RNA sequence: GGGAACGACUCGAGUAGAGUCGAAAAACUGAUGGCGUUGGUCAGGUAGGGGAACCCUGUGAAGUUUUGAUGUGCAUGGCCGGAAAAGUUCAGGGGGAUAUGCAACCAGGGUGUCAAUCAGUAAAUCCGUCCAUAGCUAUUUCGAUAGCUAUGGACGAAAAGAAACAACAACAACAAC
Reactivity to DMS in 0.01 (KOAc 150mM, MgCl2 10mM, bicine 150mM(pH8.5), 24C), signal-to-noise 2, nucleotides 027 to 126: a030c050u000g010a010u010g000g000c030g000u020u050g040g000u020c050a080g000g010u000a040g000g010g010g030a270a120c030c010c010u000g010u000g050a030a070g000u000u020u020u000g000a100u030g000u020g060c000a110u020g030g010c060c010g000g000a040a000a070a100g000u000u010c090a200g030g000g000g000g000a200u030a070u040g000c050a100a080c000c020a030g010g030g000u010g000u000c040a020a040u000c060a030g010u010a010a160a130u060c090
Reactivity to 2A3 in 0.01 (KOAc 150mM, MgCl2 10mM, bicine 150mM(pH8.5), 24C), signal-to-noise 3, nucleotides 027 to 126: a000c000u010g010a010u060g000g050c100g090u020u050g070g040u090c080a110g080g080u100a030g010g070g020g030a080a110c010c000c010u050g160u070g140a050a060g010u010u070u120u000g100a100u070g030u000g070c080a170u110g170g000c000c010g020g000a080a060a030a060g140u060u040c030a020g000g080g000g000g000a020u110a000u150g050c030a000a040c010c000a020g010g030g020u060g030u030c020a060a080u010c000a000g000u080a020a060a050u070c050